[RMDB]
RNA sequence: GGGAACGACUCGAGUAGAGUCGAAAACACCAGCCCGAGGUUACGACACGAGUGGGCUGGUACGAAUGACGUAUAGCUCUUGAAGCAGCGUGUCGAAACGUACCCGAGCUAUACGCCUGGGGUGGUGGAGUAUGUUUAGUUUCGACUGGACAUACUCAAAAGAAACAACAACAACAAC
Reactivity to DMS in 0.01 (KOAc 150mM, MgCl2 10mM, bicine 150mM(pH8.5), 24C), signal-to-noise 9, nucleotides 027 to 126: c110a060c000c000a010g000c000c000c000g000a250g010g010u010u030a070c060g000a030c030a030c020g000a100g010u020g000g000g010c000u000g000g000u000a000c090g010a130a080u020g010a120c010g000u000a010u000a010g000c000u000c010u020u040g010a010a120g000c100a100g010c010g010u000g000u000c040g010a090a100a150c150g010u040a090c040c030c050g000a010g000c000u000a010u000a010c020g010c010c000u000g000g010g000g020u010g000g010u010g000
Reactivity to 2A3 in 0.01 (KOAc 150mM, MgCl2 10mM, bicine 150mM(pH8.5), 24C), signal-to-noise 9, nucleotides 027 to 126: c030a000c000c000a000g030c000c000c000g050a050g040g040u060u120a040c040g010a010c030a000c020g020a030g010u130g000g000g000c000u000g000g000u010a010c020g060a050a070u160g030a010c000g000u010a000u010a020g000c000u000c000u040u160g080a020a010g050c090a010g010c010g000u010g020u030c030g030a120a060a010c040g030u060a040c000c010c020g000a000g000c000u010a010u000a040c010g000c000c010u040g000g000g000g010u060g000g050u060g060